[RMDB]
RNA sequence: GGGAACGACUCGAGUAGAGUCGAAAAAGGUUGGAGUGAUUCAAACGCUUCUCGGCUGAACGCUUUGAAUCCACAUUGAUGAUCACGAAGAUCUGAUCGCAGGAAAAGACGGACAAGUGUAUUAUACACACGACUCGGAAUACCGCGUUUUGCCGGAGUUGCUUGUAUAGUUCGCUAUACAAGCAACAAAAGAAACAACAACAACAAC
Reactivity to DMS in 0.01 (KOAc 150mM, MgCl2 10mM, bicine 150mM(pH8.5), 24C), signal-to-noise 2, nucleotides 027 to 156: a000g010g050u010u000g010g000a240g020u010g010a140u010u010c030a030a030a050c050g000c030u000u010c020u000c020g030g000c080u000g000a040a020c010g000c060u000u000u000g010a050a100u000c020c000a080c100a150u000u000g030a120u020g010a030u000c010a070c050g040a190a290g000a110u000c020u000g010a090u000c050g050c110a190g020g020a040a140a130a090g000a150c000g000g000a110c080a110a250g010u000g020u040a070u000u000a150u020a120c060a050c050a110c080g020a050c050u010c020g010g010a160a120u000a080c060c050g010c050g020u000u000u020u010g010c020c030g030g010a300
Reactivity to 2A3 in 0.01 (KOAc 150mM, MgCl2 10mM, bicine 150mM(pH8.5), 24C), signal-to-noise 3, nucleotides 027 to 156: a030g130g010u070u070g020g010a060g000u050g040a110u140u120c060a080a080a040c050g000c030u070u010c070u010c000g020g010c010u030g010a010a000c010g010c040u060u000u140g080a030a030u020c030c000a030c040a070u060u160g060a040u060g000a000u070c020a010c210g200a190a060g010a100u040c030u020g020a050u020c010g000c130a020g010g050a030a090a020a030g060a030c050g010g050a010c050a110a080g000u010g000u030a130u260u100a100u210a080c050a000c000a010c030g080a070c060u020c080g000g050a100a090u120a110c010c040g000c010g010u000u010u000u040g000c000c010g030g010a050

Source: RMDB library OK3TST, as collected in RNAgym. The record gives the reactivity of an RNA of 207 nucleotides to DMS and 2A3. The DMS profile rests on 3,608 reads. For 2A3 the reverse transcriptase was SuperScript II with manganese. The RNA was probed in 150 mM KOAc, 10 mM MgCl2 and 150 mM bicine (pH 8.5) at 24 C.